The record gives the reactivity of an RNA of 207 nucleotides to 2A3 and DMS. The reactions ran in a buffer of 150 mM KOAc, 10 mM MgCl2 and 150 mM bicine (pH 8.5), at 24 C. It was measured as part of the RMDB library M2RFPK. Reactivities are given for positions 27 through 156. 2A3 adducts were read by reverse transcription with SuperScript II with manganese. The DMS profile rests on 2,664 reads.
RNA sequence: GGGAACGACUCGAGUAGAGUCGAAAAGAAACUCGUUUCGCGUUGGCUGCCUAAUUCAAGGAAUUAGCGUGCCUUCAUGCUAAGGGUUUGAUGUCUGCUAAAACCCGGUGCAUUCAUCAAUGCAGGUCUCAUCCAAAUGCCUUCGGGCAUUUGGAAAAUAGUUUCUGUUCUUCGGAACAGAAACUAUAAAAGAAACAACAACAACAAC
Reactivity to 2A3 in 0.01 (KOAc 150mM, MgCl2 10mM, bicine 150mM(pH8.5), 24C), signal-to-noise 2, nucleotides 027 to 156: g050a010a080a010c020u010c040g050u060u070u070c100g000c020g010u000u030g000g010c010u080g080c040c010u000a020a000u030u040c170a300a060g230g000a100a000u000u000a010g020c030g060u050g010c000c010u000u020c030a060u070g030c000u020a030a020g000g020g000u000u000u020g030a030u040g030u000c000u000g000c010u030a020a000a040a090c020c010c010g000g020u050g010c050a110u030u190c040a060u100c070a150a140u110g010c020a020g000g100u030c030u020c060a130u000c000c000a000a000a000u020g000c030c000u050u140c300g000g030g040c000a000u000u000u020g000g000a010a000a000
Reactivity to DMS in 0.01 (KOAc 150mM, MgCl2 10mM, bicine 150mM(pH8.5), 24C), signal-to-noise 1, nucleotides 027 to 156: g030a110a020a020c010u000c030g010u000u000u000c100g020c050g040u020u000g010g000c010u010g010c180c000u000a040a020u000u000c020a190a180g040g020a060a030u010u000a030g000c000g020u000g000c000c010u020u010c040a050u000g010c020u030a210a150g010g030g020u010u010u000g000a130u000g000u000c050u020g010c040u000a080a020a040a110c010c000c000g000g070u000g010c010a060u010u010c080a060u000c030a100a120u010g020c030a070g010g000u000c030u000c040a160u010c000c000a010a000a010u000g010c000c000u000u000c300g020g000g000c000a000u020u000u000g000g000a010a000a080